An RNA of 177 nucleotides, treated with DMS and 2A3 and read out base by base.
High 2A3 reactivity points to a flexible backbone, as in loops and unpaired stretches.
For DMS the reverse transcriptase was MarathonRT.
The RNA was probed in 150 mM KOAc, 10 mM MgCl2 and 150 mM bicine (pH 8.5) at 24 C.
It was measured as part of the RMDB library OK1LIB.
[RMDB]
RNA sequence: GGGAACGACUCGAGUAGAGUCGAAAAAGCAGCGAACCAGCGAUAGGCGGACGGCGGGAGCCGUUGGCGAAGGCCUGCAGCGGCAAAAUAUUGUCAUUGACCACUUCGCGCAGGAAACGCAGGGAGAACGUGACGUAUGAUUCGUCAUACGUCACGUAAAAGAAACAACAACAACAAC
Reactivity to DMS in 0.01 (KOAc 150mM, MgCl2 10mM, bicine 150mM(pH8.5), 24C), signal-to-noise 3, nucleotides 027 to 126: a130g010c030a090g050c010g010a130a110c060c050a080g000c080g050a070u010a070g000g010c060g000g020a050c000g000g060c020g010g070g000a140g000c020c020g060u030u000g010g030c030g010a110a070g020g000c050c040u010g010c030a080g010c040g010g010c100a060a070a040a150u050a130u000u000g000u010c030a070u020u020g010a220c050c070a090c090u000u030c000g000c040g000c060a080g020g040a030a030a080c060g020c010a130g000g000g000a180g020a100
Reactivity to 2A3 in 0.01 (KOAc 150mM, MgCl2 10mM, bicine 150mM(pH8.5), 24C), signal-to-noise 5, nucleotides 027 to 126: a000g060c060a000g010c010g030a040a040c010c000a000g030c000g030a120u090a060g080g030c040g030g010a030c020g010g000c020g020g080g020a050g010c000c000g030u040u090g030g000c020g040a060a020g100g020c000c020u020g000c020a050g020c010g000g020c010a000a020a080a110u300a190u110u140g070u070c080a120u030u120g060a100c000c030a060c030u080u080c020g010c000g010c040a020g010g060a100a100a020c040g000c010a030g040g010g040a100g030a040